[RMDB]
RNA sequence: GGGAACGACUCGAGUAGAGUCGAAAACGGCGCCGGCACGACCAGGCGAACGGUCCAACGGUCGUGCGACCGAGAAAACGGUCGCGCGGUGGUGCGCGAUCUGGGCCGACCUCGACAUCAAGUCGACCGGCUGCCCGGACGUCGAGACCGCCGAACGCUCAUAAGACGCAUUCGUGCGUCUUAUGAGAAAAGAAACAACAACAACAAC
Reactivity to 2A3 in 0.01 (KOAc 150mM, MgCl2 10mM, bicine 150mM(pH8.5), 24C), signal-to-noise 2, nucleotides 027 to 156: c010g060g000c010g050c030c010g060g010c130a090c140g060a120c010c040a020g000g070c040g010a120a030c040g000g060u030c010c000a030a040c100g030g020u050c010g030u020g010c070g000a000c000c000g020a030g230a120a060a000a020c020g000g000u000c000g000c050g030c020g030g040u060g000g120u160g070c030g000c010g030a150u030c060u010g040g000g000c010c000g020a180c050c000u000c010g030a010c000a150u300c200a260a000g000u000c000g000a080c070c070g010g000c000u020g040c040c030c010g060g000a010c010g000u060c010g000a060g050a170c010c020g000c020c020g010a080a020c010g020